[RMDB]
RNA sequence: GGGAACGACUCGAGUAGAGUCGAAAACAAGUGUGCCACGCCUCACUGCCUGCGUGGGCCUCAGGGGCAGCAGCUUCCAGUGGCUGCUGGCUGCAGGGUGUCUCACCCACGCAGUGGACCUCUCACCCUAGAUAUCGUUGUUCGCAACGAUAUCUAGAAAAGAAACAACAACAACAAC
Reactivity to DMS in 0.01 (KOAc 150mM, MgCl2 10mM, bicine 150mM(pH8.5), 24C), signal-to-noise 7, nucleotides 027 to 126: c130a100a080g020u000g020u000g010c040c050a080c130g010c030c040u010c030a060c050u000g010c070c060u000g020c250g020u000g000g000g020c050c020u000c090a100g020g000g000g000c010a010g000c000a020g000c010u000u000c110c170a090g010u010g000g000c010u000g000c000u000g000g000c010u010g020c060a160g010g000g020u000g000u010c080u010c020a220c010c020c000a030c160g010c000a000g010u000g000g010a090c050c040u000c040u010c070a130c110c100
Reactivity to 2A3 in 0.01 (KOAc 150mM, MgCl2 10mM, bicine 150mM(pH8.5), 24C), signal-to-noise 6, nucleotides 027 to 126: c050a070a060g050u040g020u060g130c020c040a080c070g030c010c010u060c020a070c040u060g010c020c010u020g000c010g010u020g010g010g000c010c010u040c030a040g020g000g050g030c010a010g000c010a000g010c010u140u070c120c080a170g060u110g120g000c000u000g000c000u010g050g050c000u090g040c040a030g020g000g050u070g090u000c050u040c060a030c000c000c000a010c020g000c000a000g000u040g020g040a040c000c030u050c010u010c030a090c020c020
Source: RMDB library OK2TST, as collected in RNAgym.
This 177-nucleotide RNA was probed chemically with DMS and 2A3.
For DMS the reverse transcriptase was MarathonRT.
For DMS, 10,325 sequencing reads were counted.